[RMDB]
RNA sequence: GGGAACGACUCGAGUAGAGUCGAAAAGCAGUUUUACUAAUGCAUUCCAUGUAUUCUAACUGCCUUAAUGUCUGUCUAUAAAAACACAGUAAUUAUUAUGACAGGUUUCUAUGAUCAUGGAACAAUGCGUUUUAAUAGUGUUCGCACUAUUAAAACGAAAAGAAACAACAACAACAAC
Reactivity to 2A3 in 0.01 (KOAc 150mM, MgCl2 10mM, bicine 150mM(pH8.5), 24C), signal-to-noise 9, nucleotides 027 to 126: g010c010a000g010u030u040u100u140a160c130u180a090a120u170g100c050a060u050u000c010c000a000u010g090u060a090u050u080c050u050a020a030c000u010g020c000c030u100u160a100a050u140g050u020c000u000g010u000c040u040a060u070a060a070a030a060a010c110a010c030a100g100u120a140a070u080u110a050u050u040a050u120g010a010c000a010g020g020u010u080u000c070u060a110u140g020a020u040c000a000u010g000g010a010a020c010a040a070u130g030
Reactivity to DMS in 0.01 (KOAc 150mM, MgCl2 10mM, bicine 150mM(pH8.5), 24C), signal-to-noise 6, nucleotides 027 to 126: g000c030a050g010u000u030u030u050a060c190u040a050a080u040g030c060a300u010u020c020c030a020u010g000u020a040u010u000c080u010a050a080c000u000g000c040c030u000u030a030a050u020g020u000c010u000g000u000c030u000a140u020a030a050a100a100a090c220a080c170a110g000u020a050a100u020u010a040u000u000a010u000g000a030c000a000g000g000u020u000u020c120u020a040u010g000a030u010c010a000u000g000g000a030a070c210a070a070u030g010
The record gives the reactivity of an RNA of 177 nucleotides to 2A3 and DMS. The RNA was probed in 150 mM KOAc, 10 mM MgCl2 and 150 mM bicine (pH 8.5) at 24 C. It was measured as part of the RMDB library OK1LIB. For 2A3, 24,677 sequencing reads were counted.